[RMDB]
RNA sequence: GGGAACGACUCGAGUAGAGUCGAAAACUGCUGCUUUCUCUCGUGCCAUGUCCCCCACCCUGGACGCACUCACCCAGGCCGUCGUCAACAACACCGUCUUCGGCGUCAACGAUGAAGCAGGCCGCCAGUUAGAGGGGCAUUUCGAUGCCCCUCUAACAAAAGAAACAACAACAACAAC
Reactivity to 2A3 in 0.01 (KOAc 150mM, MgCl2 10mM, bicine 150mM(pH8.5), 24C), signal-to-noise 3, nucleotides 027 to 126: c000u030g040c020u020g000c010u040u100u070c060u020c010u010c010g040u040g040c030c020a100u110g080u070c020c000c000c010c000a030c050c000c000u040g010g020a000c050g000c030a020c020u050c000a050c010c020c020a000g050g020c000c030g020u040c030g030u060c020a030a030c000a030a010c020a020c030c040g070u100c070u120u140c060g040g000c030g050u040c060a070a030c010g040a100u120g000a020a020g050c040a020g000g050c030c030g020c020c000a020
Reactivity to DMS in 0.01 (KOAc 150mM, MgCl2 10mM, bicine 150mM(pH8.5), 24C), signal-to-noise 1, nucleotides 027 to 126: c020u000g010c000u010g000c020u000u010u000c080u000c090u000c150g010u020g000c120c030a070u000g020u010c040c030c000c040c010a100c030c000c020u010g000g000a110c020g060c050a050c030u010c060a110c050c010c080a090g000g000c000c000g080u000c000g000u000c020a020a080c140a060a060c110a240c080c050g000u000c060u010u010c030g000g010c050g000u010c120a040a130c110g030a070u050g040a050a050g000c000a020g000g030c040c010g010c050c050a130

The data come from the RNA Mapping Database (RMDB), library OK1LIB. Structure probing data (2A3 and DMS) for a 177-nucleotide construct. For DMS, 1,774 sequencing reads were counted. The 2A3 profile rests on 1,746 reads. For 2A3 the reverse transcriptase was SuperScript II with manganese. Conditions: 150 mM KOAc, 10 mM MgCl2 and 150 mM bicine (pH 8.5), 24 C. DMS adducts were read by reverse transcription with MarathonRT.